RNA sequence: GGGAACGACUCGAGUAGAGUCGAAAAGCGCAAGAUCUCCGGCGGCGUCCAGGCGGCGCCGCUGCCGCCGGAGCCGCAGCUGGCCAGCCAGGCGCACCUGAUGAUCGCCAACCCGUUCCGGGCGGGUGACUUAAAUACAAUUCGUUGUAUUUAAGUCAAAAGAAACAACAACAACAAC
Reactivity to 2A3 in 0.01 (KOAc 150mM, MgCl2 10mM, bicine 150mM(pH8.5), 24C), signal-to-noise 4, nucleotides 027 to 126: g020c010g000c040a050a030g030a170u020c020u010c030c020g030g030c050g020g000c030g180u030c040c040a050g030g020c250g060g020c150g030c240c100g010c030u050g010c010c010g010c000c040g040g010a030g000c010c010g020c000a010g020c010u040g010g020c010c020a020g010c030c020a030g010g000c020g000c020a040c000c010u070g030a110u110g020a030u100c010g020c040c000a030a030c000c010c000g020u110u020c050c050g050g070g000c000g000g000g010u030
Reactivity to DMS in 0.01 (KOAc 150mM, MgCl2 10mM, bicine 150mM(pH8.5), 24C), signal-to-noise 7, nucleotides 027 to 126: g020c050g020c070a110a090g000a090u000c020u000c010c040g000g010c020g010g010c000g000u010c040c050a120g020g010c030g010g010c060g020c080c160g010c090u000g010c010c020g030c010c010g010g000a170g000c080c060g010c030a070g010c030u000g000g010c050c050a100g010c170c040a090g000g010c020g010c030a070c030c010u000g010a090u010g000a080u010c060g000c040c040a100a110c020c010c000g000u000u010c070c050g010g010g010c100g010g000g010u010

Chemical mapping of a 177-nucleotide RNA with 2A3 and DMS. High 2A3 reactivity points to a flexible backbone, as in loops and unpaired stretches. DMS adducts were read by reverse transcription with MarathonRT. The RNA was probed in 150 mM KOAc, 10 mM MgCl2 and 150 mM bicine (pH 8.5) at 24 C. For 2A3, 11,876 sequencing reads were counted.